[RMDB]
RNA sequence: GGGAACGACUCGAGUAGAGUCGAAAAGAGCAGGGAACUGUUUUGCCUGGAACAUGGUAUCGGAUCAGGUGGUCGCCGAGUCGACCAGGUGAACGGGGGAGAUUUCAUUUCAUCCGAUUCCUCGUUCUGCAGCUGCGGAGUUCGCUCCGCAGCUGCAAAAAGAAACAACAACAACAAC
Reactivity to 2A3 in 0.01 (KOAc 150mM, MgCl2 10mM, bicine 150mM(pH8.5), 24C), signal-to-noise 1, nucleotides 027 to 126: g080a020g000c070a040g000g050g000a130a050c010u050g030u120u000u120u000g030c010c020u000g000g000a070a040c000a020u070g010g000u080a050u100c000g010g000a010u030c080a100g180g000u130g000g010u050c040g050c000c000g030a000g030u030c000g000a040c000c010a070g000g060u120g000a000a000c020g000g000g110g030g000a120g000a170u020u020u190c070a070u050u200u060c040a050u020c020c050g010a000u000u100c000c000u030c080g040u030u000c000
An RNA of 177 nucleotides, treated with 2A3 and read out base by base. The RNA was probed in 150 mM KOAc, 10 mM MgCl2 and 150 mM bicine (pH 8.5) at 24 C. 2A3 adducts were read by reverse transcription with SuperScript II with manganese.